[RMDB]
RNA sequence: GGGAACGACUCGAGUAGAGUCGAAAAUUUACUGACUUCAAGGAUGAAGGACGCGUCGCCGCCACCCUAGAGGCGGCAUCCCCCGCGUGACGCCCUCUGCAGGCACCGUCGUGACCGGAUUCCUUGAUCCACAGCAUCUAUUCGUAGAUGCUGUGGAAAAAGAAACAACAACAACAAC
Reactivity to 2A3 in 0.01 (KOAc 150mM, MgCl2 10mM, bicine 150mM(pH8.5), 24C), signal-to-noise 4, nucleotides 027 to 126: u100u120u090a160c040u080g140a040c030u050u010c020a000a010g010g010a030u020g000a010a020g020g010a030c000g030c010g020u080c060g000c010c020g000c010c020a120c070c030c030u120a040g010a020g050g000c000g000g000c000a010u040c000c000c000c020c000g040c020g020u020g010a010c010g010c010c020c000u100c050u100g070c120a090g020g010c020a030c020c030g010u010c010g040u050g060a090c000c010g000g000a000u010u010c010c000u000u000g000a000
Reactivity to DMS in 0.01 (KOAc 150mM, MgCl2 10mM, bicine 150mM(pH8.5), 24C), signal-to-noise 3, nucleotides 027 to 126: u020u030u070a100c230u050g000a190c090u000u000c060a000a020g000g000a090u000g000a300a230g000g000a070c020g000c000g000u000c020g020c220c120g050c010c070a100c150c140c090u090a130g010a090g010g000c000g030g000c080a070u030c000c010c030c050c070g030c110g050u000g000a040c040g000c140c000c070u000c060u000g030c200a100g010g040c060a040c220c030g000u030c030g010u000g000a140c000c000g000g040a090u000u030c030c000u000u000g020a020

Overview:
Conditions: 150 mM KOAc, 10 mM MgCl2 and 150 mM bicine (pH 8.5), 24 C. An RNA of 177 nucleotides, treated with 2A3 and DMS and read out base by base. Reactivities are given for positions 27 through 126. The data come from the RNA Mapping Database (RMDB), libraries RFM100 and RFMREP.